Description: Chemical mapping of a 177-nucleotide RNA with DMS and 2A3. The reactions ran in a buffer of 150 mM KOAc, 10 mM MgCl2 and 150 mM bicine (pH 8.5), at 24 C. For DMS the reverse transcriptase was MarathonRT. It was measured as part of the RMDB library OK1LIB.
[RMDB]
RNA sequence: GGGAACGACUCGAGUAGAGUCGAAAAGUUCGCGGCGAACACGAUCGUGGCGGCCGAGCUCACCAUCGUGUCCGGGUGUGGGCCCAGCCAGCCGAACAACUCGGCUGCGUGUCCCGUGUUGCCGUCGACCACUUCUACGGUUCGCCGUAGAAGUGGUAAAAGAAACAACAACAACAAC
Reactivity to DMS in 0.01 (KOAc 150mM, MgCl2 10mM, bicine 150mM(pH8.5), 24C), signal-to-noise 2, nucleotides 027 to 126: g000u030u040c030g000c020g000g060c020g000a040a000c010a040c000g000a010u000c160g060u000g020g060c020g000g010c040c060g000a060g000c060u040c060a000c020c110a090u010c040g000u030g010u010c040c130g000g050g020u000g000u040g000g020g020c000c020c000a180g070c030c060a040g020c000c000g020a040a260c190a130a210c110u020c010g000g000c030u000g000c080g000u020g020u000c090c030c000g060u000g000u000u000g000c000c010g020u000c040g020
Reactivity to 2A3 in 0.01 (KOAc 150mM, MgCl2 10mM, bicine 150mM(pH8.5), 24C), signal-to-noise 2, nucleotides 027 to 126: g120u120u070c030g000c010g020g010c060g080a020a000c000a020c010g010a030u040c040g010u030g170g000c030g020g020c040c040g000a040g010c030u060c030a030c010c010a080u070c030g040u010g080u120c050c020g050g010g000u060g040u060g010g040g000c000c030c000a020g020c000c000a000g020c000c030g020a070a040c030a030a030c090u010c000g000g010c000u010g020c050g010u040g060u040c000c040c000g000u020g010u030u060g010c030c020g010u120c010g020